[RMDB]
Source information: This 207-nucleotide RNA was probed chemically with 2A3.
RNA sequence: GGGAACGACUCGAGUAGAGUCGAAAAGGGAUGGGAUCCGAAGCCCCCUUGAGGGAUAAUACAGGCUCUCCCAUCCAACUCCUAUUCCAACACGUCCUCGUCGUACAGAGUGGUAACAUGUGUCACCUAUACUAAUGACCGUUCGCGGUCAUUAGAACCAAGCGACAAUGUUCGCAUUGUCGCUUGGAAAAGAAACAACAACAACAAC
Reactivity to 2A3 in 0.01 (KOAc 150mM, MgCl2 10mM, bicine 150mM(pH8.5), 24C), signal-to-noise 1, nucleotides 027 to 156: g080g000g000a000u000g000g010g000a050u150c000c010g040a060a030g020c000c000c000c020c000u030u200g030a270g020g000g040a010u100a290a020u200a230c170a140g020g000c000u040c000u000c000c020c000a000u000c000c000a000a010c000u000c000c000u050a150u080u000c030c000a050a010c020a000c090g040u060c000c000u040c000g190u050c010g000u100a050c070a060g080a000g040u000g010g040u040a060a000c000a030u060g040u000g080u090c000a130c030c000u030a000u090a300c000u000a040a000u020g000a000c010c010g020u020u020c140g000c000g090g010u000c000a000u000u000a000g000a000a020

For 2A3, 534 sequencing reads were counted.
It was measured as part of the RMDB library M2RFPK.